This 177-nucleotide RNA was probed chemically with 2A3 and DMS. Source: RMDB library TTRDES, as collected in RNAgym. DMS (dimethyl sulfate) methylates the pairing face of unpaired adenines and cytosines. Values cover nucleotides 27 to 126. The RNA was probed in 150 mM KOAc, 10 mM MgCl2 and 150 mM bicine (pH 8.5) at 24 C.
[RMDB]
RNA sequence: GGGAACGACUCGAGUAGAGUCGAAAAGAUAUGGACUGGUCACCUUGAACUUUGAUCUCUAGUCGGAAACGACUAGAGGGAGUUUGGGUGAGCCAGUCCUAAGUCAAAAGAUCGGUUCGCCGAUCAAUCUUUGUAAUUGGUUCGCCAAUUACAAAGAAAAAGAAACAACAACAACAAC
Reactivity to 2A3 in 0.01 (KOAc 150mM, MgCl2 10mM, bicine 150mM(pH8.5), 24C), signal-to-noise 2, nucleotides 027 to 126: g030a010u090a050u120g000g000a000c000u000g000g030u040c010a010c020c020u130u300g020a040a040c020u300u280u170g110a120u030c000u000c000u000a000g000u010c010g000g000a070a090a060c010g000a000c010u000a000g000a000g000g000g010a010g000u050u140u140g030g000g000u030g010a020g000c020c000a010g000u000c000c000u000a000a000g000u010c000a000a020a020a170g000a000u010c000g010g030u090u090c300g100c110c010g010a020u010c010a000a040
Reactivity to DMS in 0.01 (KOAc 150mM, MgCl2 10mM, bicine 150mM(pH8.5), 24C), signal-to-noise 4, nucleotides 027 to 126: g010a040u010a300u030g010g000a020c000u000g010g010u000c000a010c020c000u000u020g030a010a000c000u000u000u020g010a060u020c000u010c000u000a000g020u000c000g010g010a130a120a230c010g030a010c010u000a000g000a000g000g000g010a010g000u000u000u000g010g000g000u010g000a080g020c000c000a010g010u000c000c000u000a010a080g010u010c060a130a130a140a150g010a020u000c000g010g020u000u010c260g030c010c000g000a020u000c010a080a080